[RMDB]
RNA sequence: GGGAACGACUCGAGUAGAGUCGAAAAUAGCUCCCUGAGGAGGCCUGGGGCCUGAGAGGAGCCCUAGUUUUGCUGCCACCUCAUUUCUCUCGCCUUCUAGGGGUCUCGGAGGCUGAAGCCUUGCCGCUCGGAAGAGGAAUUUCGAUUCCUCUUCCGAAAAAGAAACAACAACAACAAC
Reactivity to DMS in 0.01 (KOAc 150mM, MgCl2 10mM, bicine 150mM(pH8.5), 24C), signal-to-noise 2, nucleotides 027 to 126: u000a190g010c110u000c020c020c010u020g000a040g000g020a050g020g010c040c030u000g010g000g030g010c010c020u000g010a080g000a170g000g000a150g010c010c050c040u000a030g010u010u000u020u000g020c150u010g000c020c050a130c040c000u000c020a060u010u000u000c020u000c030u010c100g020c030c030u010u010c040u010a100g000g000g010g010u000c010u010c060g000g000a110g000g000c030u000g000a090a110g010c040c030u000u000g000c030c040g010c170
Reactivity to 2A3 in 0.01 (KOAc 150mM, MgCl2 10mM, bicine 150mM(pH8.5), 24C), signal-to-noise 1, nucleotides 027 to 126: u070a000g030c000u020c000c010c000u010g050a020g000g000a010g000g030c000c000u020g010g000g040g010c000c070u020g010a050g010a020g060g020a020g000c000c030c000u050a070g030u020u240u180u220g060c050u080g110c020c000a070c040c010u020c010a000u030u070u020c020u010c010u010c020g040c010c000u060u020c000u070a060g050g020g050g080u090c020u000c020g030g000a060g030g000c060u090g100a080a020g000c010c010u010u060g030c050c030g020c010
Record summary:
Structure probing data (DMS and 2A3) for a 177-nucleotide construct. The 2A3 profile rests on 1,083 reads. It was measured as part of the RMDB library OK2TST. 2A3 adducts were read by reverse transcription with SuperScript II with manganese.